The record gives the reactivity of an RNA of 177 nucleotides to 2A3 and DMS. 2A3 adducts were read by reverse transcription with SuperScript II with manganese. Source: RMDB libraries RFM100 and RFMREP, as collected in RNAgym. Conditions: 150 mM KOAc, 10 mM MgCl2 and 150 mM bicine (pH 8.5), 24 C. High DMS reactivity at an A or C suggests that its Watson-Crick edge is free. Reactivities are given for positions 27 through 126.
RNA sequence: GGGAACGACUCGAGUAGAGUCGAAAAUACCAAUAUCCGCUUUAUAAAUACCGGUGUAAUCCACGAUUAAAGCGUUAGUGAUAAUCAAAUCCAGUUCUUCUUUGCUAGGGUUGUUGGAUUGGCUCAUAUUCAUGAUUUAUUUCGAUAAAUCAUGAAUAAAAGAAACAACAACAACAAC
Reactivity to 2A3 in 0.01 (KOAc 150mM, MgCl2 10mM, bicine 150mM(pH8.5), 24C), signal-to-noise 2, nucleotides 027 to 126: u120a050c010c000a050a060u100a060u100c050c020g010c020u010u120u090a120u090a050a230a080u240a140c010c120g080g000u000g000u020a000a040u160c030c000a080c050g110a070u000u080a020a020a000g090c030g010u020u030a060g010u050g070a040u090a130a120u120c080a000a080a000u010c000c010a050g000u090u020c010u010u000c040u010u260u230g020c030u120a030g030g030g030u020u000g030u030u000g030g010a120u000u030g030g040c010u060c040a030u030
Reactivity to DMS in 0.01 (KOAc 150mM, MgCl2 10mM, bicine 150mM(pH8.5), 24C), signal-to-noise 3, nucleotides 027 to 126: u010a180c040c030a090a130u010a090u000c140c020g000c010u000u000u000a040u020a090a140a100u020a060c180c050g000g010u000g020u020a100a090u000c090c010a060c130g000a100u000u000a010a030a090g000c010g010u010u010a060g020u000g020a100u010a050a090u020c120a040a080a040u000c050c030a050g010u010u000c030u010u010c060u000u010u010g010c030u000a070g000g000g000u020u010g000u000u000g020g010a110u020u010g000g010c080u000c080a110u000